[RMDB]
An RNA of 177 nucleotides, treated with 2A3 and DMS and read out base by base. Reactivities are given for positions 27 through 126. The data come from the RNA Mapping Database (RMDB), library OK2TRN. The RNA was probed in 150 mM KOAc, 10 mM MgCl2 and 150 mM bicine (pH 8.5) at 24 C.

RNA sequence: GGGAACGACUCGAGUAGAGUCGAAAAGAUGCCAUCAAUCCUACUUGGAACCAGGAAAUCGUGGAUUCCAUGUCAACUCCAAGUUAUGCGACAAAUCGUAGAGCUGAUUGUGGUGAAAUGGAAUGUAGCCGGUAAUGGCAUUCGUGCCAUUACCGGCAAAAGAAACAACAACAACAAC
Reactivity to 2A3 in 0.01 (KOAc 150mM, MgCl2 10mM, bicine 150mM(pH8.5), 24C), signal-to-noise 1, nucleotides 027 to 126: g050a000u220g020c000c010a050u040c030a050a030u010c020c020u000a030c000u050u030g000g010a000a040c020c000a010g090g000a000a170a000u250c150g120u110g160g050a130u030u000c000c000a090u100g040u070c010a000a010c060u080c040c020a020a040g020u050u010a070u070g000c020g000a070c110a070a150a080u110c000g000u030a010g000a050g120c150u040g010a090u030u040g050u040g070g010u060g040a000a060a030u120g000g050a080a000u090g050u230a070
Reactivity to DMS in 0.01 (KOAc 150mM, MgCl2 10mM, bicine 150mM(pH8.5), 24C), signal-to-noise 1, nucleotides 027 to 126: g020a160u000g000c040c040a080u000c090a100a110u000c010c030u000a040c010u000u000g000g000a060a170c110c040a080g000g010a040a090a050u000c060g010u000g000g020a150u000u010c000c000a090u000g020u010c110a060a080c030u010c080c090a030a050g020u000u000a070u010g000c010g000a260c230a100a170a110u010c000g020u000a080g000a110g010c090u000g000a080u000u000g000u000g000g080u000g000a110a040a060u000g000g000a040a090u000g010u000a130